[RMDB]
RNA sequence: GGGAACGACUCGAGUAGAGUCGAAAAGAUCAGGAUCUGCUAGCAUGUGAUCGCCAUGGACGCUAGGUACUAGCUAGCUAGCACACAGUACGAUCCGAUCGAUCGUCUGACUAGGUACACAUGGUACGUACAAGGGUACCUUCGGGUACCCUUGUACAAAAGAAACAACAACAACAAC
Reactivity to 2A3 in 0.01 (KOAc 150mM, MgCl2 10mM, bicine 150mM(pH8.5), 24C), signal-to-noise 2, nucleotides 027 to 126: g000a040u080c060a130g060g080a030u010c010u080g020c020u030a030g010c040a100u140g030u060g140a070u170c040g000c060c000a030u070g110g000a040c040g030c140u060a050g000g090u060a070c020u020a070g100c020u000a050g000c000u020a010g040c060a000c020a000c000a090g140u210a030c060g000a000u040c020c080g030a070u110c060g000a030u020c010g060u000c040u000g060a060c010u010a030g100g000u110a030c060a000c000a050u050g060g030u090a040c070
Reactivity to DMS in 0.01 (KOAc 150mM, MgCl2 10mM, bicine 150mM(pH8.5), 24C), signal-to-noise 3, nucleotides 027 to 126: g010a060u000c040a130g020g000a060u000c050u000g000c040u020a060g020c040a110u000g030u000g000a060u000c080g020c010c020a070u000g030g000a090c130g020c040u000a030g010g050u000a070c060u010a050g000c130u000a130g020c000u000a010g010c000a200c190a170c050a060g010u020a030c060g020a000u010c010c120g040a100u000c170g010a010u000c020g010u010c020u000g000a300c060u000a110g000g000u000a070c110a210c090a060u000g000g000u000a080c110
Description:
Chemical mapping of a 177-nucleotide RNA with 2A3 and DMS. The reactions ran in a buffer of 150 mM KOAc, 10 mM MgCl2 and 150 mM bicine (pH 8.5), at 24 C. For DMS, 1,895 sequencing reads were counted. 2A3 adducts were read by reverse transcription with SuperScript II with manganese.